About this RNA
Structure probing data (DMS and 2A3) for a 207-nucleotide construct. Source: RMDB library M2RFPK, as collected in RNAgym.

[RMDB]
RNA sequence: GGGAACGACUCGAGUAGAGUCGAAAAAGUCACCUAUUACGAUAGGUGACAGUUGAACCAGCGAACAAUUCAGUUGCGAGAUUCGAGGUUUCAGUCUGAAUCAUAGUAGCCAUUACGAUGGCUACAACUCACUCCCGACUGUUCGCAGUCGGGAGAACCCUGUAAGAACGUUCGCGUUCUUACAGGGAAAAGAAACAACAACAACAAC
Reactivity to DMS in 0.01 (KOAc 150mM, MgCl2 10mM, bicine 150mM(pH8.5), 24C), signal-to-noise 1, nucleotides 027 to 156: a100g000u010c000a020c020c000u000a030u010u010a170c190g000a050u000a000g000g010u010g020a000c010a020g030u000u010g010a100a150c010c000a130g000c010g010a020a030c040a070a080u000u000c030a040g000u000u020g050c030g000a050g030a060u000u000c010g050a250g020g020u010u000u000c070a080g010u000c020u000g000a030a100u000c120a070u000a140g010u000a010g000c000c000a050u000u000a140c160g050a160u010g010g010c000u000a000c000a040a060c100u000c030a100c010u000c000c020c000g020a040c030u020g020u000u010c300g010c000a010g020u010c010g150g020g020a010g010a000a020
Reactivity to 2A3 in 0.01 (KOAc 150mM, MgCl2 10mM, bicine 150mM(pH8.5), 24C), signal-to-noise 3, nucleotides 027 to 156: a000g000u010c000a000c000c000u000a010u010u050a080c280g040a010u010a010g000g000u000g000a000c000a000g000u020u150g040a060a020c000c000a010g150c000g000a000a000c010a050a090u000u000c000a000g000u000u010g000c010g010a000g000a000u000u000c000g000a010g040g060u140u210u300c020a010g130u070c000u000g040a000a000u070c040a050u100a100g000u000a000g000c010c000a010u050u030a080c250g130a030u030g000g000c000u000a000c000a000a000c020u100c060a060c000u000c000c000c000g010a000c010u020g040u060u070c190g000c180a000g000u000c020g000g000g000a000g000a000a000
The reactions ran in a buffer of 150 mM KOAc, 10 mM MgCl2 and 150 mM bicine (pH 8.5), at 24 C.